RNA sequence: GGGAACGACUCGAGUAGAGUCGAAAAAUAACGUCGAGAGAUGAUACAAUGGGCUAUCCGCAUCCUUUCCCUUCAUACGCAUAGUAUAUGGAAAAGGUUCAGAGACUAAAUGGGAAUGGCUAGUUUAUUAAAUUCAACGUUUUAGAUGCGUACUGAAGAUACGGAAUCGGUUCGCCGAUUCCGUAUCAAAAGAAACAACAACAACAAC
Reactivity to 2A3 in 0.01 (KOAc 150mM, MgCl2 10mM, bicine 150mM(pH8.5), 24C), signal-to-noise 1, nucleotides 027 to 156: a010u130a030a020c030g030u050c040g000a000g000a000g010a160u120g040a060u100a170c100a110a070u090g000g000g040c000u040a030u080c000c040g030c000a070u100c000c000u020u020u000c000c000c000u040u070c050a000u000a040c000g000c020a010u070a070g010u030a010u000a010u120g000g000a050a000a030a030g050g000u010u070c020a040g100a060g050a160c060u100a040a040a040u090g020g000g000a090a020u050g010g000c010u000a010g030u100u060u000a030u000u030a110a060a110u120u040c050a100a100c050g000u000u000u000u170a080g000a130u040g030c030g020u020a060c030u000g070a080a110